This 177-nucleotide RNA was probed chemically with DMS.
The RNA was probed in 150 mM KOAc, 10 mM MgCl2 and 150 mM bicine (pH 8.5) at 24 C.

RNA sequence: GGGAACGACUCGAGUAGAGUCGAAAAGAAGCCGAAGUCCAUGGUAACGCCGGUGGAGAUAUAGUCUUUGGCGUUGGUAUCAAAGUAGCUGGCUUUGAAUUGCAGGUCAUCCUCAGCCAUCAUCAGGUCAAUGAGAGGACUUCGGUCCUCUCAUUGAAAAAGAAACAACAACAACAAC
Reactivity to DMS in 0.01 (KOAc 150mM, MgCl2 10mM, bicine 150mM(pH8.5), 24C), signal-to-noise 1, nucleotides 027 to 126: g000a120a090g000c020c000g020a070a100g000u020c030c030a090u010g010g020u000a050a030c060g020c020c010g010g020u010g000g010a070g010a070u010a080u000a100g010u000c030u000u000u010g000g010c020g020u010u020g000g020u000a060u000c050a070a020a040g000u000a080g010c100u010g010g010c050u000u000u000g000a050a100u000u000g010c050a080g030g000u000c060a080u010c030c000u010c050a110g010c000c030a050u000c090a080u010c110a080g010g010